[RMDB]
The record gives the reactivity of an RNA of 177 nucleotides to DMS.
It was measured as part of the RMDB library TTRDES.
Conditions: 150 mM KOAc, 10 mM MgCl2 and 150 mM bicine (pH 8.5), 24 C.
RNA sequence: GGGAACGACUCGAGUAGAGUCGAAAAAAAAGAUAUGGAGGUACCUACCCACCUAUUGCGAGCCAAUGAUGGAGGGUCGGAAACGACCCUCUUGAGGCUCCAAUAGAGGGUACCUCCUAAGUCAAAACUUAAGGAUAAUCUUCGGAUUAUCCUUAAGAAAAGAAACAACAACAACAAC
Reactivity to DMS in 0.01 (KOAc 150mM, MgCl2 10mM, bicine 150mM(pH8.5), 24C), signal-to-noise 3, nucleotides 027 to 126: a110a060a090a160g000a050u000a060u010g000g000a030g020g000u000a000c000c000u000a150c070c020c080a300c020c010u000a010u000u000g010c300g020a000g030c000c010a250a140u030g000a050u010g010g000a030g020g010g030u000c000g000g010a020a040a050c010g000a020c000c000c000u000c000u000u000g000a050g020g020c000u000c000c000a000a010u000a000g000a070g020g010g010u000a000c000c020u000c000c000u000a000a070g020u000c040a050a080a130a250